[RMDB]
RNA sequence: GGGAACGACUCGAGUAGAGUCGAAAAUGGUCGAGCGUGACAGGCCGCACAGGUGCAUCACUUCCGGCACACGUAAAAAACGCUCCUGCGUGAUGUCCGGCAGCGGCAUCAGUGGCGUCACUGGGGCCACUCAUUAGGUGUUCGCACCUAAUGAGUGAAAAGAAACAACAACAACAAC
Reactivity to DMS in 0.01 (KOAc 150mM, MgCl2 10mM, bicine 150mM(pH8.5), 24C), signal-to-noise 9, nucleotides 027 to 126: u010g010g020u000c020g010a150g030c260g010u000g000a030c030a120g020g030c020c020g020c030a090c190a130g000g000u000g010c020a150u010c080a040c020u000u000c020c010g000g000c020a030c010a010c020g000u010a000a050a050a060a060a150c100g000c040u000c040c040u000g000c030g000u000g000a100u000g000u010c000c000g010g010c080a020g010c110g000g000c000a010u000c010a060g020u000g010g020c020g010u000c010a010c020u000g020g010g010g000c040
Reactivity to 2A3 in 0.01 (KOAc 150mM, MgCl2 10mM, bicine 150mM(pH8.5), 24C), signal-to-noise 3, nucleotides 027 to 126: u110g010g010u030c040g030a110g110c070g050u010g010a020c030a070g250g140c000c010g000c010a070c030a090g020g000u010g010c010a080u140c020a040c000u020u010c000c000g000g000c000a010c000a000c000g010u040a070a110a040a080a090a050c090g040c100u070c030c040u020g000c000g010u050g090a300u020g150u080c010c000g010g000c010a000g000c010g040g000c000a000u010c000a000g010u010g010g020c010g010u010c000a000c030u040g170g000g010g000c000
Conditions: 150 mM KOAc, 10 mM MgCl2 and 150 mM bicine (pH 8.5), 24 C. This 177-nucleotide RNA was probed chemically with DMS and 2A3.